RNA sequence: GGGAACGACUCGAGUAGAGUCGAAAAGCUAAAGACUUCGGUCUUUAGCAAAUAAAUUCUGGUGAUUUGCUACCUUUAAGUGCAGCUAGAAAUUCAAAAAUAAAACAACGAGGUUCGCCUCGUUGAACUUUAUUAAUGACUUCGGUCAUUAAUAAAGAAAAGAAACAACAACAACAAC
Reactivity to 2A3 in 0.01 (KOAc 150mM, MgCl2 10mM, bicine 150mM(pH8.5), 24C), signal-to-noise 4, nucleotides 027 to 126: g010c010u010a000a000a010g020a000c010u020u100c270g060g000u000c000u000u010u000a000g000c000a000a010a000u020a000a030a030u060u010c020u030g000g050u030g100a300u080u100u220g010c030u070a050c020c000u070u170u160a110a010g020u020g030c000a000g000c000u030a020g040a060a080a050u140u100c100a110a050a080a130a110u190a070a120a040a060c000a000a000c000g000a000g040g000u050u030c180g070c020c000u000c000g000u000u000g000a000a000
Reactivity to DMS in 0.01 (KOAc 150mM, MgCl2 10mM, bicine 150mM(pH8.5), 24C), signal-to-noise 3, nucleotides 027 to 126: g000c000u000a000a010a000g010a010c000u000u010c180g030g010u000c000u010u000u000a000g010c000a010a070a060u010a070a080a120u000u000c020u000g020g000u000g010a160u020u010u000g000c010u000a020c010c040u010u010u010a070a100g010u000g010c000a050g010c100u000a050g010a050a040a100u010u010c070a010a070a060a100a070u010a040a080a080a200c000a010a000c000g020a010g000g000u000u000c200g030c000c000u000c000g010u000u000g000a030a060
Source: RMDB library M2PK50, as collected in RNAgym. Chemical mapping of a 177-nucleotide RNA with 2A3 and DMS. Values cover nucleotides 27 to 126.